[RMDB]
RNA sequence: GGGAACGACUCGAGUAGAGUCGAAAAGACAUGAACGAUCUAAAUCUUCGAGAUUGUAAAUGUCGUUGUAUGGAAAUCUACAUUUGAGAUGUUGCGAGUUAGAGGAGGCCUCUACUUUGCGUUAGAAAAGUCGAAAGUAGUUCGCUACUUUCGACUUAAAAGAAACAACAACAACAAC
Reactivity to DMS in 0.01 (KOAc 150mM, MgCl2 10mM, bicine 150mM(pH8.5), 24C), signal-to-noise 5, nucleotides 027 to 126: g010a000c000a010u000g000a280a070c000g010a000u010c010u000a050a100a130u030c150u020u030c200g010a030g010a020u000u000g000u000a030a170a010u000g000u000c000g000u000u000g010u020a090u010g010g000a050a060a070u000c050u000a060c080a100u020u020u000g010a090g000a030u010g010u000u020g010c020g010a020g000u010u010a010g000a030g000g020a300g020g010c020c000u010c000u000a000c020u000u010u000g060c060g000u020u020a090g000a070a090
Reactivity to 2A3 in 0.01 (KOAc 150mM, MgCl2 10mM, bicine 150mM(pH8.5), 24C), signal-to-noise 3, nucleotides 027 to 126: g010a010c000a000u010g010a240a110c030g000a000u010c000u050a080a170a080u090c080u240u170c260g000a020g020a020u000u010g010u020a000a140a060u000g020u000c010g000u040u030g020u030a260u090g020g030a080a050a120u000c030u020a220c060a080u020u090u200g100a040g030a040u090g000u060u080g020c000g020a010g000u120u200a010g130a040g150g030a190g060g230c020c000u000c010u010a010c000u000u090u170g040c020g050u050u000a100g050a130a110